[RMDB]
RNA sequence: GGGAACGACUCGAGUAGAGUCGAAAAGGCGGUGAAGCCAGUACCAUCGGCAGCGUUCAUGUCACCCGCGAAGUCGAUGCUGCACGUACGCUGGAAACUCACCAAAUCGCGUUUCGUGAAUCAGGUCCUAAAAUCCCACGUUCGCGUGGGAUUUUAGAAAAGAAACAACAACAACAAC
Reactivity to 2A3 in 0.01 (KOAc 150mM, MgCl2 10mM, bicine 150mM(pH8.5), 24C), signal-to-noise 2, nucleotides 027 to 126: g020g020c010g010g000u040g050a040a000g050c010c000a000g000u050a120c080c060a120u040c010g000g010c000a020g030c020g030u000u040c070a080u240g060u080c020a080c000c030c050g030c070g040a040a000g040u070c050g010a010u020g000c000u060g050c020a050c270g100u120a040c080g000c010u000g010g000a110a080a040c000u020c000a060c000c000a020a000a110u110c070g000c010g020u100u120u020c070g000u080g030a020a050u120c030a040g140g000u030c000
Reactivity to DMS in 0.01 (KOAc 150mM, MgCl2 10mM, bicine 150mM(pH8.5), 24C), signal-to-noise 2, nucleotides 027 to 126: g050g040c130g010g000u030g000a020a080g000c000c020a040g000u000a110c080c180a060u000c170g010g000c010a000g010c050g030u000u000c110a070u020g020u040c110a090c090c050c160g000c040g000a100a100g000u040c090g090a010u000g070c030u000g030c070a200c000g030u000a110c290g060c010u030g020g090a020a030a070c140u010c050a080c040c000a060a270a060u010c020g030c010g000u000u000u010c040g030u000g010a170a040u000c000a050g000g000u020c060